[RMDB]
RNA sequence: GGGAACGACUCGAGUAGAGUCGAAAACAAACAUUUAUUUUCUCACAGCUCUGGAGUCUGGAAGCCCAAGAUCAAGAUAUUGGCAGGUUUGCUUUCUCCUGAGGCUUCUCUCCUUAGCUUACAGAUGGCCACCUUCUCACUGUGGCAUAAAUGGCCACAGCGGAGGUAGGUUCGCCUACCUCCGCUGAAAAGAAACAACAACAACAAC
Reactivity to 2A3 in 0.01 (KOAc 150mM, MgCl2 10mM, bicine 150mM(pH8.5), 24C), signal-to-noise 1, nucleotides 027 to 156: c030a000a150a000c010a000u010u060u100a050u030u180u110u030c060u010c020a060c030a000g010c000u010c000u020g000g000a000g030u030c170u210g010g010a020a010g000c000c000c000a070a040g040a070u130c100a000a000g030a030u080a070u140u200g090g000c080a100g220g060u290u220u120g050c030u030u040u080c010u010c000c040u030g040a100g050g000c000u030u000c040u030c000u000c000c010u000u000a000g000c000u010u020a020c030a010g030a020u030g030g010c000c000a020c010c020u180u160c100u060c040a120c100u070g040u000g020g000c000a000u010a010a010a040u040g060g000c030c020a020
Chemical mapping of a 207-nucleotide RNA with 2A3.
The reactions ran in a buffer of 150 mM KOAc, 10 mM MgCl2 and 150 mM bicine (pH 8.5), at 24 C.